[RMDB]
An RNA of 177 nucleotides, treated with DMS and 2A3 and read out base by base. Reactivities are given for positions 27 through 126.
RNA sequence: GGGAACGACUCGAGUAGAGUCGAAAAGAUAUGGAUCCGCCAAGCGAUGAGUAUACGGGUUCGGAAACGAACUUAUACGAGCUUACGGAUCCUAAGUCAAACUUCAGGGUCUUCGGACCCUGAAGAACUGUUAUCAAUUCUUCGGAAUUGAUAACAGAAAAGAAACAACAACAACAAC
Reactivity to DMS in 0.01 (KOAc 150mM, MgCl2 10mM, bicine 150mM(pH8.5), 24C), signal-to-noise 3, nucleotides 027 to 126: g010a010u000a010u010g000g010a000u000c000c010g000c150c140a010a010g000c000g020a240u020g000a300g010u010a010u000a010c300g010g000g000u000u000c000g010g010a010a010a030c000g000a010a010c000u010u000a000u000a000c000g010a000g020c010u000u000a080c000g000g000a020u000c010c000u000a000a060g000u000c010a180a100a260c000u000u010c010a000g000g010g010u000c000u000u020c300g020g010a010c000c000c000u000g000a000a000g010a070a110
Reactivity to 2A3 in 0.01 (KOAc 150mM, MgCl2 10mM, bicine 150mM(pH8.5), 24C), signal-to-noise 3, nucleotides 027 to 126: g010a000u020a000u070g000g000a010u020c020c050g070c300c300a010a000g000c000g210a300u160g010a160g010u010a000u000a060c210g090g050g000u000u000c000g000g000a000a000a000c000g000a000a000c000u010u010a000u000a010c030g020a030g000c010u000u000a000c000g010g000a000u020c000c010u000a000a000g000u000c000a030a120a130c010u010u000c000a000g000g000g030u020c000u030u110c240g170g010a000c000c010c010u000g000a000a000g000a020a020